[RMDB]
RNA sequence: GGGAACGACUCGAGUAGAGUCGAAAAGUGAUCCGUCUGACUUCACCCAAGGGUUAGAUCCGGGUCUCAAAUUAAUUGGGUUACGUUAAAUGCCGCCGUUUGAAGUGUUUAAAAGAGAUUUUCAAGCUAGUUAGUCCAUCCGAGCCUCUGUUGAACGGUGUUUACUAUAGUUCGCUAUAGUAAACACAAAAGAAACAACAACAACAAC
Reactivity to 2A3 in 0.01 (KOAc 150mM, MgCl2 10mM, bicine 150mM(pH8.5), 24C), signal-to-noise 4, nucleotides 027 to 156: g150u090g020a030u020c000c000g020u020c010u000g010a000c010u030u010c060a060c020c020c010a020a040g030g010g000u010u010a000g010a030u070c200c140g010g000g020u050c080u030c100a070a090a080u180u250a020a110u050u020g010g010g000u010u060a050c030g010u030u060a080a070a020u070g010c020c010g000c000c000g000u010u030u040g030a040a010g010u020g050u050u130u180a070a090a040a010g070a010g010a050u090u090u080u120c060a040a000g010c010u020a010g030u080u040a020g030u020c030c020a030u020c070c040g030a020g040c000c010u050c060u040g020u040u040g030a030a010c030g040
Reactivity to DMS in 0.01 (KOAc 150mM, MgCl2 10mM, bicine 150mM(pH8.5), 24C), signal-to-noise 2, nucleotides 027 to 156: g000u000g000a030u010c000c010g040u030c000u000g000a030c000u000u010c040a080c050c080c030a200a250g010g010g020u010u010a000g010a060u010c030c140g020g030g030u000c020u010c030a060a020a120u000u000a080a090u020u000g010g040g000u000u010a090c060g020u010u010a030a060a110u010g010c000c030g040c010c020g010u000u000u000g020a110a040g020u000g010u010u000u000a040a030a070a090g020a160g000a090u000u020u000u020c040a040a120g050c050u000a060g040u000u000a090g010u010c010c020a040u010c030c040g020a070g000c040c000u000c070u000g000u000u000g020a100a080c120g000

An RNA of 207 nucleotides, treated with 2A3 and DMS and read out base by base. It was measured as part of the RMDB library ARCHII. For 2A3 the reverse transcriptase was SuperScript II with manganese. For DMS the reverse transcriptase was MarathonRT. The DMS profile rests on 3,703 reads. For 2A3, 2,620 sequencing reads were counted. DMS (dimethyl sulfate) methylates the pairing face of unpaired adenines and cytosines. As a SHAPE reagent, 2A3 marks flexible, mostly unpaired nucleotides at the ribose 2'-OH.